RNA sequence: GGGAACGACUCGAGUAGAGUCGAAAAGCAAGAUUGGGGGUAAUCGACAGCGAUUGCGUCACCAUGCGCGCAUGAGAUAAUGCAGUCUCACGCGUUAAAUAGCGUUUACGACGCUCUUCGCUCAAGACCGGGAUAAUUUAUUCGUAAAUUAUCCCGGAAAAGAAACAACAACAACAAC
Reactivity to DMS in 0.01 (KOAc 150mM, MgCl2 10mM, bicine 150mM(pH8.5), 24C), signal-to-noise 5, nucleotides 027 to 126: g000c070a070a070g010a130u010u010g000g000g020g010g010u010a070a100u000c030g010a300c300a050g010c020g010a020u000u000g020c000g010u000c010a090c210c220a040u000g000c030g000c010g000c020a050u000g000a020g010a020u000a070a120u000g020c260a130g000u000c000u000c000a010c030g010c000g010u000u000a020a060a110u020a110g000c030g030u000u010u010a130c140g000a020c000g000c020u010c050u000u000c030g000c000u000c070a050a170g010a140
Reactivity to 2A3 in 0.01 (KOAc 150mM, MgCl2 10mM, bicine 150mM(pH8.5), 24C), signal-to-noise 5, nucleotides 027 to 126: g030c020a020a040g080a240u150u220g000g020g000g010g010u050a030a060u030c030g030a040c050a020g040c010g010a000u000u030g010c000g010u010c000a020c070c010a020u070g000c000g000c000g000c030a050u030g010a000g030a020u130a220a180u300g150c080a030g060u000c000u000c000a010c010g010c000g010u010u050a080a220a060u130a060g000c020g020u010u060u080a130c160g000a000c000g000c010u000c030u110u100c000g000c010u020c020a040a010g010a020
The record gives the reactivity of an RNA of 177 nucleotides to DMS and 2A3. The DMS profile rests on 5,314 reads. DMS adducts were read by reverse transcription with MarathonRT. The RNA was probed in 150 mM KOAc, 10 mM MgCl2 and 150 mM bicine (pH 8.5) at 24 C. 2A3 adducts were read by reverse transcription with SuperScript II with manganese. For 2A3, 7,793 sequencing reads were counted. It was measured as part of the RMDB library OK2TRN.